Description:
The record gives the reactivity of an RNA of 177 nucleotides to DMS and 2A3. The RNA was probed in 150 mM KOAc, 10 mM MgCl2 and 150 mM bicine (pH 8.5) at 24 C. For 2A3, 2,000 sequencing reads were counted. DMS adducts were read by reverse transcription with MarathonRT.

[RMDB]
RNA sequence: GGGAACGACUCGAGUAGAGUCGAAAACCUUCCGAGAAGACUGAGGGGGGAGCUUGGAGAGUGGGGGACCCAGUGGAACCAUGGGAUGCCCUUCCCGAUUCCGAACCCAUCCCUUCCCCCGAGGGUCGUAAAGGAUGAAGUUCGCUUCAUCCUUUACAAAAGAAACAACAACAACAAC
Reactivity to DMS in 0.01 (KOAc 150mM, MgCl2 10mM, bicine 150mM(pH8.5), 24C), signal-to-noise 3, nucleotides 027 to 126: c020c040u010u010c070c030g010a130g000a060a120g000a060c030u000g000a300g010g000g020g000g010g020a030g020c200u000u010g020g010a220g010a110g020u010g010g000g010g030g000a120c080c070c070a070g010u000g000g000a070a020c060c060a090u000g000g000g000a070u000g010c110c100c060u000u000c010c010c020g010a130u010u000c040c020g010a130a170c030c020c000a080u000c040c050c020u010u000c010c000c000c010c000g010a110g010g010g000u020c050
Reactivity to 2A3 in 0.01 (KOAc 150mM, MgCl2 10mM, bicine 150mM(pH8.5), 24C), signal-to-noise 2, nucleotides 027 to 126: c020c000u120u080c100c040g150a160g050a250a110g040a060c090u110g010a050g030g000g010g000g000g000a020g020c090u100u070g040g020a100g010a070g130u090g010g010g000g010g020a000c030c050c020a040g030u070g080g010a030a020c030c030a150u070g020g000g020a010u100g040c040c020c000u020u020c010c000c020g040a050u120u010c000c020g010a080a090c010c010c010a050u180c020c010c010u030u010c030c010c070c010c000g020a050g000g030g000u000c020